[RMDB]
RNA sequence: GGGAACGACUCGAGUAGAGUCGAAAAGUUCGCAUGGUGCACUAUUGUGUUAUUAGUAACUAAGUAAGCUUACAAUCGAAAAUGUUUGACCAUAAAAGGGUAAAAUGGUGUAAGACAGUCUGAUACUUUACGGCUUCACGUUUCGACGUGAAGCCAACAAUUGGUUCGGGUUCGCCCGAACCAAUUGAAAAGAAACAACAACAACAAC
Reactivity to DMS in 0.01 (KOAc 150mM, MgCl2 10mM, bicine 150mM(pH8.5), 24C), signal-to-noise 1, nucleotides 027 to 156: g030u000u000c050g000c080a230u010g020g030u010g040c050a060c040u000a000u010u000g010u000g040u020u040a090u000u040a060g040u000a050a120c040u010a100a140g010u000a100a060g010c010u030u000a040c030a200a130u030c070g000a090a060a130a100u000g030u010u000u000g000a160c040c020a040u010a080a040a070a080g000g020g000u000a010a060a050a080u000g030g020u000g040u000a030a040g020a070c010a040g010u000c040u020g000a100u010a060c050u000u000u010a100c100g030g060c000u000u000c000a000c000g030u000u010u000c240g020a060c020g070u000g010a020a030g010c000c000a000a030
Reactivity to 2A3 in 0.01 (KOAc 150mM, MgCl2 10mM, bicine 150mM(pH8.5), 24C), signal-to-noise 2, nucleotides 027 to 156: g020u030u060c050g010c110a100u040g050g040u050g000c030a040c040u120a110u130u190g010u020g020u040u030a000u020u050a130g040u030a040a040c020u000a050a140g060u020a170a000g050c040u130u060a020c070a050a090u070c050g030a020a170a000a000u130g080u090u060u040g010a040c000c000a020u050a210a120a070a040g020g010g000u000a000a100a000a000u060g060g030u010g010u070a070a030g020a040c010a000g050u000c040u030g000a040u000a140c020u050u040u190a030c010g000g000c010u000u000c000a000c010g010u000u080u100c200g010a000c000g000u030g000a000a000g000c010c000a000a000